[RMDB]
RNA sequence: GGGAACGACUCGAGUAGAGUCGAAAAUACUUAGUACGCGCGUAGUUGCAGGCAUUCCGGGUGCAGCAACUGACGCGGAAGACUUUUCCCAGAGUGUGCGCUUCAACUGGCGCGCUGAGUAGUGCACGAAUUGCACGUACGUUCGCGUACGUGCAAAGUUGAGGACACUAUUCGUAGUGUCCUCAACAAAAGAAACAACAACAACAAC
Reactivity to DMS in 0.01 (KOAc 150mM, MgCl2 10mM, bicine 150mM(pH8.5), 24C), signal-to-noise 1, nucleotides 027 to 156: u030a020c050u000u000a060g020u000a170c030g030c000g050c010g070u020a030g080u000u000g010c010a150g000g000c020a070u000u020c010c300g070g050g060u000g040c010a300g000c010a020a010c000u000g020a010c020g000c000g000g010a110a140g010a020c070u010u000u000u000c000c000c000a200g010a110g040u000g010u000g010c020g020c000u020u000c010a090a190c170u000g010g000c050g020c000g000c050u000g010a090g000u000a050g020u020g000c040a060c090g030a090a220u000u020g010c000a020c020g000u010a010c000g000u000u010c210g090c050g020u000a010c010g000u000g020c000a000a020a020
Reactivity to 2A3 in 0.01 (KOAc 150mM, MgCl2 10mM, bicine 150mM(pH8.5), 24C), signal-to-noise 2, nucleotides 027 to 156: u080a000c040u070u050a010g000u030a050c050g060c030g030c040g120u010a010g050u020u000g010c040a110g090g040c040a040u090u110c130c240g220g000g000u000g010c010a030g010c000a020a030c040u050g030a040c010g000c000g000g000a030a020g010a010c020u050u070u050u000c000c000c000a000g030a040g070u110g000u040g050c000g000c030u080u080c090a140a090c110u140g060g000c030g050c010g000c000u000g000a050g040u140a020g040u030g090c060a020c130g090a140a160u040u010g000c000a000c000g030u000a000c000g010u030u060c160g000c010g070u010a000c000g020u010g000c000a000a030a000
About this RNA: An RNA of 207 nucleotides, treated with DMS and 2A3 and read out base by base. For 2A3, 986 sequencing reads were counted. DMS adducts were read by reverse transcription with MarathonRT. The DMS profile rests on 1,941 reads. Reactivities are rounded to 0.1 and cut off at 0 and 3. Conditions: 150 mM KOAc, 10 mM MgCl2 and 150 mM bicine (pH 8.5), 24 C.